Notes: This 177-nucleotide RNA was probed chemically with 2A3. Reactivities are rounded to 0.1 and cut off at 0 and 3. It was measured as part of the RMDB library OK1LIB. The reactions ran in a buffer of 150 mM KOAc, 10 mM MgCl2 and 150 mM bicine (pH 8.5), at 24 C.

RNA sequence: GGGAACGACUCGAGUAGAGUCGAAAAAGGCAUUUACGCACUUCCAUAAUACGGAACUUGCACGGUAUCGGGCACGUUUGGCAGAUAUUGACGCGCGUAUUGUGUAUGAGCGCUUUUUGCGCGACUGAUGCUGCUCCUCGUUCGCGAGGAGCAGCAUAAAAGAAACAACAACAACAAC
Reactivity to 2A3 in 0.01 (KOAc 150mM, MgCl2 10mM, bicine 150mM(pH8.5), 24C), signal-to-noise 1, nucleotides 027 to 126: a000g080g060c030a030u000u000u070a010c010g000c000a080c070u000u010c010c000a000u000a140a110u000a070c110g000g020a110a000c040u020u010g000c010a000c020g030g170u300a190u300c000g010g090g040c110a070c110g050u040u070u130g050g000c030a010g000a080u090a000u000u050g000a000c020g000c000g000c000g000u010a050u090u100g000u070g040u070a050u190g110a010g000c000g030c080u070u050u100u070u080g100c130g000c000g000a000c000u100g010